[RMDB]
RNA sequence: GGGAACGACUCGAGUAGAGUCGAAAAGAUAUGGAGCGUUGCCGAGACGCAGUCGGAAACGACUGGCGUCGUUUGACGCAUCGCUCCUAAGUCAAAAUCAACAGUUUUCUUCGGAAAACUGUUGAAACCCAUCCUUUUAGUUCGCUAAAAGGAUGGGAAAAGAAACAACAACAACAAC
Reactivity to 2A3 in 0.01 (KOAc 150mM, MgCl2 10mM, bicine 150mM(pH8.5), 24C), signal-to-noise 3, nucleotides 027 to 126: g000a000u010a010u040g000g000a000g000c000g010u010u010g000c020c030g040a040g000a020c000g000c010a000g010u010c000g010g000a060a000a010c010g020a000c030u050g230g270c030g010u040c010g000u130u170u280g030a000c000g010c000a000u010c000g000c000u000c010c000u000a000a000g000u000c020a010a010a020a300u030c000a000a010c000a000g000u010u000u000u000c000u040u090c210g060g000a000a000a010a010c000u000g000u000u000g000a000a000a000
Reactivity to DMS in 0.01 (KOAc 150mM, MgCl2 10mM, bicine 150mM(pH8.5), 24C), signal-to-noise 5, nucleotides 027 to 126: g000a020u000a010u000g000g010a010g010c000g000u000u000g010c000c010g000a080g010a000c000g000c000a010g000u010c000g010g000a000a010a020c010g010a010c000u000g010g010c020g020u000c000g020u010u010u010g020a300c300g000c000a000u000c010g020c010u000c000c000u000a000a030g000u000c000a090a080a120a180u000c000a000a010c000a020g000u010u000u000u000c000u000u010c180g000g000a020a010a000a000c000u000g000u000u000g000a000a090a120

Background:
The record gives the reactivity of an RNA of 177 nucleotides to 2A3 and DMS. The DMS profile rests on 5,773 reads. The 2A3 profile rests on 10,578 reads. Reactivities are rounded to 0.1 and cut off at 0 and 3. Source: RMDB library TTRDEL, as collected in RNAgym.